[RMDB]
RNA sequence: GGGAACGACUCGAGUAGAGUCGAAAAUCGCAAAACCGCGGCAAGUGGAGUUAGCGAGAGGAGGCUGGGUUUUGGCUUCCUUAAGCAAUCGGACACCGAGAAGGUGUGGUCGUUACCGUGAAAUUCCGUGACAAAAUAACGUUCGCGUUAUUUUGAAACGGAUCUGUAUGUUCGCAUACAGAUCCGUAAAAGAAACAACAACAACAAC
Reactivity to DMS in 0.01 (KOAc 150mM, MgCl2 10mM, bicine 150mM(pH8.5), 24C), signal-to-noise 3, nucleotides 027 to 156: u000c020g090c040a100a040a090a150c080c010g020c030g030g020c060a110a100g030u000g010g020a110g010u000u000a170g020c000g000a300g010a010g030g000a020g020g030c000u010g010g040g030u000u000u000u000g010g030c010u000u010c020c000u000u000a020a300g030c020a070a060u010c030g030g010a090c020a080c010c010g000a170g010a110a150g010g000u010g020u000g010g020u010c050g030u000u000a040c040c060g010u000g010a130a110a190u010u000c020c000g010u000g000a180c000a020a000a040a030u000a030a020c010g010u000u030c290g040c050g000u000u000a010u000u000u000u010g000a100a120
Reactivity to 2A3 in 0.01 (KOAc 150mM, MgCl2 10mM, bicine 150mM(pH8.5), 24C), signal-to-noise 3, nucleotides 027 to 156: u030c000g000c010a040a030a050a080c040c010g010c010g080g030c110a150a050g020u060g060g050a090g030u100u120a020g030c000g010a020g000a000g030g000a000g020g000c040u090g040g140g190u110u080u150u200g050g000c010u010u000c000c000u000u010a040a010g000c000a020a040u060c020g020g000a010c010a010c010c010g020a040g070a200a100g050g000u000g000u010g030g040u030c020g020u020u060a070c010c020g010u050g060a060a070a060u120u040c040c040g040u080g040a040c000a000a000a000a000u000a000a000c000g010u030u040c250g000c000g050u020u000a000u000u000u000u020g010a100a040
Structure probing data (DMS and 2A3) for a 207-nucleotide construct. Conditions: 150 mM KOAc, 10 mM MgCl2 and 150 mM bicine (pH 8.5), 24 C. The 2A3 profile rests on 2,962 reads. Source: RMDB library M2RFPK, as collected in RNAgym. For DMS, 4,853 sequencing reads were counted.